Chemical mapping of a 177-nucleotide RNA with 2A3 and DMS. The reactions ran in a buffer of 150 mM KOAc, 10 mM MgCl2 and 150 mM bicine (pH 8.5), at 24 C. DMS (dimethyl sulfate) methylates the pairing face of unpaired adenines and cytosines. It was measured as part of the RMDB library VIROID.
RNA sequence: GGGAACGACUCGAGUAGAGUCGAAAAAGGGUCGCCCAGGAAUGGCGGGACCUCACUCUGCGAGGUCCGCGUUCCAUCCUUUCUUACCUGAUGGCCGGCAUGGUCCCAGCCUCCUCGCUGGCGCCGGGUCAUAUCCCUAGUUCGCUAGGGAUAUGACAAAAGAAACAACAACAACAAC
Reactivity to 2A3 in 0.01 (KOAc 150mM, MgCl2 10mM, bicine 150mM(pH8.5), 24C), signal-to-noise 3, nucleotides 027 to 126: a010g090g000g000u090c030g030c000c030c030a000g100g100a030a070u140g300g300c210g050g010g050a040c000c000u010c000a060c050u300c190u300g110c100g010a010g000g000u000c000c010g050c000g000u040u050c000c000a020u070c030c000u130u120u040c000u100u100a060c000c040u130g090a160u240g090g000c010c030g000g060c000a080u170g020g070u170c000c040c000a000g020c000c010u090c010c030u040c070g000c010u010g000g030c050g020c000c040g050g000
Reactivity to DMS in 0.01 (KOAc 150mM, MgCl2 10mM, bicine 150mM(pH8.5), 24C), signal-to-noise 1, nucleotides 027 to 126: a070g010g010g000u000c110g000c030c010c050a140g010g000a040a030u010g020g050c030g000g010g010a020c010c000u000c000a070c150u010c240u010g010c070g000a020g000g000u000c010c020g020c020g000u000u010c020c010a100u010c030c030u000u000u000c050u000u000a190c040c050u030g020a110u010g020g000c010c020g000g000c060a070u000g020g000u000c170c020c020a050g010c020c050u010c070c040u000c060g010c040u000g000g010c060g040c020c000g010g000